The data come from the RNA Mapping Database (RMDB), library OK1LIB. The record gives the reactivity of an RNA of 177 nucleotides to 2A3. Reactivities are given for positions 27 through 126. Conditions: 150 mM KOAc, 10 mM MgCl2 and 150 mM bicine (pH 8.5), 24 C.
[RMDB]
RNA sequence: GGGAACGACUCGAGUAGAGUCGAAAAAGUGGUUAGGAAACACCCACAUCACACAGCUGAUAAAUAACUAACCUAGGAUUUGAAGGACCUCUUUGAUCCAAAGCACACAUUCAUUUCAUGUGCUGUAGGGUACUCACCCUUUCGAGGGUGAGUACCCAAAAGAAACAACAACAACAAC
Reactivity to 2A3 in 0.01 (KOAc 150mM, MgCl2 10mM, bicine 150mM(pH8.5), 24C), signal-to-noise 2, nucleotides 027 to 126: a000g160u090g020g050u030u090a050g110g140a060a050a050c060a070c020c020c020a000c000a070u090c020a000c020a010c050a060g140c110u000g060a090u080a030a240a050u140a000a000c000u000a000a000c000c050u050a150g030g010a060u130u060u300g030a000a000g030g150a240c030c030u170c030u000u000u050g000a000u000c000c000a020a000a000g000c000a000c000a070c000a000u000u100c010a110u030u190u030c130a110u160g030u000g000c000u000g030u080a020